[RMDB]
RNA sequence: GGGAACGACUCGAGUAGAGUCGAAAAAAAUAGAGUCUGAAGUUUAACAGGAAAGUUAUAUGAAAAGCUAAGAAAAUUCUGGGAAGGGAAAGAAGGAACUACCCCAUCAGAUAAUAUGCAUGUUAUAUAGCUACUAUAAUCACAUAUAUGACAGGCACGUACUAUCGAGGUUCGCCUCGAUAGUACGAAAAGAAACAACAACAACAAC
Reactivity to 2A3 in 0.01 (KOAc 150mM, MgCl2 10mM, bicine 150mM(pH8.5), 24C), signal-to-noise 2, nucleotides 027 to 156: a000a000a000u120a020g040a010g020u000c030u010g070a120a060g030u070u100u120a140a030c060a030g030g080a060a120a020g020u060u020a060u040a060u250g050a150a030a020a000g010c010u040a010a010g110a030a170a080a080u070u020c010u050g000g010g050a080a000g080g030g000a170a160a000g050a040a070g090g040a040a040c010u080a050c050c010c010c000a010u070c000a010g030a050u060a050a090u120a090u140g010c010a000u010g000u070u000a010u000a000u030a030g070c030u080a060c030u040a130u130a160a020u110c080a020c030a090u060a000u030a010u050g000a010c010a010g020g030c010a000
Structure probing data (2A3) for a 207-nucleotide construct.
Source: RMDB library OK3TST, as collected in RNAgym.
The reactions ran in a buffer of 150 mM KOAc, 10 mM MgCl2 and 150 mM bicine (pH 8.5), at 24 C.
2A3 adducts were read by reverse transcription with SuperScript II with manganese.